[RMDB]
RNA sequence: GGGAACGACUCGAGUAGAGUCGAAAACAAGUAACCUGUGAUGUCUGUCACGGCCAAGGAAAAGAAAUCAAAUAUCCAUGUACAACCUGUCAUGGAACAGGUCAUGAGAAACAAGCUCAUAGCGUACGUGGCGCAAAAUGUUCGCAUUUUGCGCCACAAAAGAAACAACAACAACAAC
Reactivity to 2A3 in 0.01 (KOAc 150mM, MgCl2 10mM, bicine 150mM(pH8.5), 24C), signal-to-noise 1, nucleotides 027 to 126: c050a020a020g220u030a110a000c000c000u000g030u000g000a080u080g300u160c270u060g040u000c030a030c050g000g120c000c080a020a260g100g130a130a000a070a000g110a000a180a000u120c010a100a070a000u190a070u040c010c010a050u000g000u000a110c030a110a040c120c240u000g000u080c000a010u300g070g000a000a000c000a000g000g000u020c000a000u120g110a000g080a300a110a050c030a010a010g000c000u000c000a110u160a100g140c050g000u000a000c000